Background
The record gives the reactivity of an RNA of 177 nucleotides to 2A3 and DMS. 2A3 adducts were read by reverse transcription with SuperScript II with manganese. For 2A3, 1,473 sequencing reads were counted. The reactions ran in a buffer of 150 mM KOAc, 10 mM MgCl2 and 150 mM bicine (pH 8.5), at 24 C. DMS adducts were read by reverse transcription with MarathonRT.
RNA sequence: GGGAACGACUCGAGUAGAGUCGAAAAGUAUCGGGAAGUCGUACGCGUACCUCAUCCCCGCCCUCCUCUGGGGGACGAACAACGAGGAACGGGUGGUGGUGAGUACGGCCACCAUCACCCUCCAGCAACCCCGUGUAUGGUUCGCCAUACACGGGGUAAAAGAAACAACAACAACAAC
Reactivity to 2A3 in 0.01 (KOAc 150mM, MgCl2 10mM, bicine 150mM(pH8.5), 24C), signal-to-noise 1, nucleotides 027 to 126: g080u060a040u200c070g000g010g070a050a070g020u010c010g000u010a010c030g040c060g180u120a080c030c060u070c040a120u050c010c000c000c000g030c000c000c000u010c000c040u210c120u100g020g000g000g000g040a030c060g030a010a020c030a040a030c080g060a060g040g060a210a070c140g000g000g000u000g010g020u000g010g010u000g010a000g000u000a010c000g010g030c000c000a020c000c010a000u020c010a010c000c000c000u020c000c000a030g000c010a060
Reactivity to DMS in 0.01 (KOAc 150mM, MgCl2 10mM, bicine 150mM(pH8.5), 24C), signal-to-noise 1, nucleotides 027 to 126: g000u010a060u020c190g020g010g030a120a060g000u000c000g000u000a030c010g040c300g000u000a150c040c000u010c120a180u000c000c030c000c060g020c010c000c000u000c010c050u010c220u000g000g020g000g000g020a060c000g000a050a070c180a060a090c230g010a140g020g000a010a080c070g010g000g000u000g000g010u000g010g000u000g000a120g000u000a020c010g000g050c000c000a010c000c040a020u000c010a020c000c000c020u000c040c100a120g000c260a150